[RMDB]
RNA sequence: GGGAACGACUCGAGUAGAGUCGAAAAGAAAGAAAAGAAAGAAAAUCAGAGCCCAAAUAAACCGAGAUAACCUCAUCUCAUCGGUGAAGAUGAAAAGGACGCAUACGUCCAAAGGGCUCUGAAAGAACCUCCACUAUAGCUUCGGCUAUAGUGGAGGAAAAGAAACAACAACAACAAC
Reactivity to DMS in 0.01 (KOAc 150mM, MgCl2 10mM, bicine 150mM(pH8.5), 24C), signal-to-noise 2, nucleotides 027 to 126: g000a110a190a080g020a100a070a080a100g000a130a100a070g000a090a100a240a050u000c000a000g000a010g010c000c000c000a040a100a100u000a020a120a000c050c010g000a010g000a040u000a160a090c170c110u030c180a040u030c040u000c110a160u020c080g040g010u000g000a060a070g010a120u020g000a100a070a090a170g040g010a020c000g010c300a090u020a090c090g000u000c000c000a010a120a050g010g000g010c020u020c000u000g000a010a050a030g020a060a190
Reactivity to 2A3 in 0.01 (KOAc 150mM, MgCl2 10mM, bicine 150mM(pH8.5), 24C), signal-to-noise 2, nucleotides 027 to 126: g030a000a160a030g110a070a140a060a000g120a060a090a000g040a020a160a010a000u040c000a000g000a000g010c000c000c000a000a090a000u040a020a030a000c020c000g000a000g000a010u110a140a140c010c040u160c060a090u040c020u000c010a190u140c110g010g000u020g020a040a090g130a150u090g100a020a070a040a000g040g010a000c010g040c040a050u100a300c050g010u000c000c000a000a000a040g000g000g000c000u000c000u000g020a020a020a000g020a010a000